[RMDB]
RNA sequence: GGGAACGACUCGAGUAGAGUCGAAAAGAUAUGGAUGGGUCUGAACUUCAAUGAUGACCCCGACAAGGUAUUCUCGGAAACGAGAAUACCUUGUCGGGGUUUGAGAAGUCAGAGCCCAUCCUAAGUCCAAGGAUAAUGAGUUCGCUCAUUAUCCUUGAAAAGAAACAACAACAACAAC
Reactivity to 2A3 in 0.01 (KOAc 150mM, MgCl2 10mM, bicine 150mM(pH8.5), 24C), signal-to-noise 1, nucleotides 027 to 126: g060a040u130a140u300g020g000a010u020g020g000g050u050c010u010g070a180a090c010u060u000c070a200a300u150g060a030u110g050a050c020c040c020c090g040a020c020a010a010g050g000u040a020u060u000c010u020c080g030g100a300a130a060c080g050a000g010a010a020u000a000c000c000u010u010g010u050c040g020g120g040g000u000u000u000g000a000g000a000a020g000u000c010a020g030a040g000c000c010c000a010u000c010c000u010a000a020g020u030c040
Reactivity to DMS in 0.01 (KOAc 150mM, MgCl2 10mM, bicine 150mM(pH8.5), 24C), signal-to-noise 1, nucleotides 027 to 126: g000a110u010a290u010g000g000a020u010g010g000g020u010c000u010g000a080a060c000u000u000c010a150a240u020g010a160u010g000a000c000c000c000c010g030a030c000a040a020g000g010u020a010u000u010c000u010c000g000g000a100a120a280c010g010a010g000a040a010u000a000c000c010u000u000g010u000c000g000g030g000g010u000u000u000g000a100g000a020a020g010u000c010a000g010a070g000c000c000c000a010u000c000c000u010a020a100g000u000c050
Structure probing data (2A3 and DMS) for a 177-nucleotide construct. For 2A3, 2,043 sequencing reads were counted. DMS adducts were read by reverse transcription with MarathonRT. Source: RMDB library TTRINS, as collected in RNAgym.